[RMDB]
An RNA of 177 nucleotides, treated with 2A3 and DMS and read out base by base. Reactivities are given for positions 27 through 126. Source: RMDB libraries RFM100 and RFMREP, as collected in RNAgym. For 2A3 the reverse transcriptase was SuperScript II with manganese.

RNA sequence: GGGAACGACUCGAGUAGAGUCGAAAACCAGAUGCUUCGGGUUGGCGAUCUUCUCGCCUGUCGACAGGACAGCAAAGUCCUUCACACCCAGGUCCACCCCGACCGCGCUGCCGGUCUCGGGCUGCGGGUACUGUAGCGAGUUCGCUCGCUACAGUACAAAAGAAACAACAACAACAAC
Reactivity to 2A3 in 0.01 (KOAc 150mM, MgCl2 10mM, bicine 150mM(pH8.5), 24C), signal-to-noise 9, nucleotides 027 to 126: c010c000a020g050a110u170g020c040u040u090c080g040g000g010u060u080g030g000c010g030a050u050c100u190u070c060u100c030g010c000c010u010g040u030c020g020a040c050a080g000g030a000c000a030g110c130a280a100a030g010u010c000c000u010u040c030a040c000a010c010c010c000a000g000g030u010c030c020a040c030c010c000c000g010a010c000c000g000c020g100c260u140g040c080c010g030g020u030c040u030c040g030g010g000c020u050g020c040g040g030
Reactivity to DMS in 0.01 (KOAc 150mM, MgCl2 10mM, bicine 150mM(pH8.5), 24C), signal-to-noise 5, nucleotides 027 to 126: c020c010a190g000a100u010g000c060u000u010c090g020g020g000u010u030g010g010c040g000a040u040c210u030u020c180u010c010g000c020c020u000g000u000c100g020a080c240a030g000g010a010c000a110g010c230a090a110a090g010u000c000c000u000u010c040a040c150a120c030c020c020a100g000g010u010c060c070a160c070c000c030c060g000a110c000c010g000c020g000c120u000g010c080c020g010g010u010c080u030c100g000g000g010c030u010g010c070g010g000